RNA sequence: GGGAACGACUCGAGUAGAGUCGAAAAUCGAUCCAGACCGAAGGGGUGGCUGGCUCUCUGGAACUGGUUGCUCCUGCCGUCGAGCCACUGCGGCCUGUUGCGCCGCGUCCGACCCGCAACGCCGUCCCUUGUUGUCUCAGUUCGCUGAGACAACAAGAAAAGAAACAACAACAACAAC
Reactivity to DMS in 0.01 (KOAc 150mM, MgCl2 10mM, bicine 150mM(pH8.5), 24C), signal-to-noise 3, nucleotides 027 to 126: u010c080g000a100u010c050c070a120g000a090c090c060g010a160a050g010g010g020g010u000g000g010c030u000g010g000c010u000c030u000c170u020g010g020a030a050c040u020g000g000u000u000g010c050u000c010c010u000g020c090c130g010u000c050g000a080g030c060c040a070c150u000g030c030g000g020c020c050u000g000u000u000g010c110g000c010c000g020c020g000u000c040c040g000a140c080c030c010g000c080a040a050c070g010c030c030g000u000c020c020
Reactivity to 2A3 in 0.01 (KOAc 150mM, MgCl2 10mM, bicine 150mM(pH8.5), 24C), signal-to-noise 1, nucleotides 027 to 126: u080c000g040a020u010c020c000a020g100a110c000c040g100a080a030g000g000g000g020u010g010g000c000u010g010g000c000u010c010u000c070u180g140g030a050a070c010u010g010g050u000u010g020c000u010c010c010u020g030c030c020g020u050c030g010a000g020c010c010a060c080u120g010c010g000g010c000c040u210g050u090u100g050c070g000c010c010g020c010g000u020c010c000g020a100c050c010c000g000c020a020a000c020g000c030c030g040u020c000c010